[RMDB]
RNA sequence: GGGAACGACUCGAGUAGAGUCGAAAAAGAACCUAUCUAUCUCUUCGGCGAGAUGGUGCGACCGGUAGGCGCAGGCGUGGUCACCGUGUCCGUGAUAAAGCUGAUGCAGCCCGAGGUUGACGACAGGCUGGCGGGUGCAGAGUUCGCCGACGAUACCCAGGUCAUGUAGGUUCGCCUACAUGACCUGAAAAGAAACAACAACAACAAC
Reactivity to 2A3 in 0.01 (KOAc 150mM, MgCl2 10mM, bicine 150mM(pH8.5), 24C), signal-to-noise 1, nucleotides 027 to 156: a000g130a020a030c000c010u090a060u070c050u070a000u040c000u000c000u040u040c030g020g000c060g010a000g020a090u020g050g000u090g020c030g020a000c010c010g000g000u100a180g030g000c030g020c060a050g300g000c070g050u170g000g000u050c010a020c070c000g060u090g060u010c080c080g000u010g030a090u130a210a130a020g000c070u060g000a160u030g000c010a020g190c000c010c030g060a090g020g020u000u090g060a000c000g010a150c030a020g050g020c000u050g000g250c000g000g000g010u000g020c020a020g000a000g090u010u000c000g030c030c000g030a020c010g090a100u030a080c080c000